[RMDB]
Conditions: 150 mM KOAc, 10 mM MgCl2 and 150 mM bicine (pH 8.5), 24 C.
This 177-nucleotide RNA was probed chemically with 2A3 and DMS.
The 2A3 profile rests on 2,928 reads.
As a SHAPE reagent, 2A3 marks flexible, mostly unpaired nucleotides at the ribose 2'-OH.
RNA sequence: GGGAACGACUCGAGUAGAGUCGAAAAUGUGAUUGAUGUUAUCUCCCAAUCUGAGCACGAUCACCUUAAUGAAUCACUAGCUCUGCAAGCCCCUGAUGAUAUAGGAACAUUAAUAACCGAGCACCUCGUUAAGCAAAGAGUUCGCUCUUUGCUUAACAAAAGAAACAACAACAACAAC
Reactivity to 2A3 in 0.01 (KOAc 150mM, MgCl2 10mM, bicine 150mM(pH8.5), 24C), signal-to-noise 3, nucleotides 027 to 126: u090g010u000g020a010u030u030g040a080u010g050u090u140a110u070c050u030c000c020c020a000a040u100c090u080g060a010g010c020a000c040g000a020u000c000a040c020c020u100u100a130a040u190g090a060a060u050c010a020c100u050a030g000c010u010c030u040g050c080a100a080g010c030c010c020c030u020g020a060u090g010a000u010a000u020a190g000g030a010a010c000a010u040u100a050a060u080a030a020c030c010g020a010g010c010a040c080c020u050c050
Reactivity to DMS in 0.01 (KOAc 150mM, MgCl2 10mM, bicine 150mM(pH8.5), 24C), signal-to-noise 6, nucleotides 027 to 126: u010g010u000g020a050u000u020g010a110u010g010u000u000a110u010c100u010c020c030c020a130a100u010c140u020g010a060g010c020a050c080g000a030u000c020a040c040c190u010u010a060a100u010g010a080a070u000c040a070c060u010a090g010c030u000c030u000g030c110a080a110g010c060c020c020c030u010g020a080u010g000a060u010a050u020a070g000g000a090a060c040a040u020u010a050a060u020a080a130c080c050g000a090g000c100a100c090c070u000c160